This 177-nucleotide RNA was probed chemically with DMS and 2A3.
[RMDB]
RNA sequence: GGGAACGACUCGAGUAGAGUCGAAAAUACAGUAAAACGUAUUGCAAGGUUUAUCAGUUCCUAUAAACAGGUAAAUAACAAUAUAUGCUGCUUGGCGGUAAAAAAAAACCGUUGUCAGCAGUAAUGCCACUACUGUCUGGUUCGCCAGACAGUAGUGAAAAGAAACAACAACAACAAC
Reactivity to DMS in 0.01 (KOAc 150mM, MgCl2 10mM, bicine 150mM(pH8.5), 24C), signal-to-noise 1, nucleotides 027 to 126: u000a040c060a070g010u020a090a040a190a140c200g000u000a010u000u000g000c070a120a160g000g000u000u000u000a030u000c020a110g030u010u000c080c060u020a100u000a060a040a090c010a090g010g000u010a010a080a030u000a030a100c040a050a040u030a070u000a050u000g000c000u000g020c000u000u000g000g000c000g000g020u020a000a000a000a000a050a070a170a030a000c020c010g030u000u010g000u010c110a000g000c030a020g060u000a010a050u010g010c140
Reactivity to 2A3 in 0.01 (KOAc 150mM, MgCl2 10mM, bicine 150mM(pH8.5), 24C), signal-to-noise 2, nucleotides 027 to 126: u010a010c020a040g140u120a030a060a030a020c030g020u020a010u020u040g000c040a110a060g060g030u040u110u050a050u060c010a010g030u000u040c000c000u100a120u220a090a060a020c040a000g030g010u100a120a000a030u070a130a030c020a050a010u080a010u030a020u270g020c010u000g010c030u040u050g000g050c040g030g010u110a140a040a000a020a000a000a010a030a010c010c000g020u020u010g150u110c010a010g000c000a010g000u020a070a000u010g050c020
For DMS the reverse transcriptase was MarathonRT.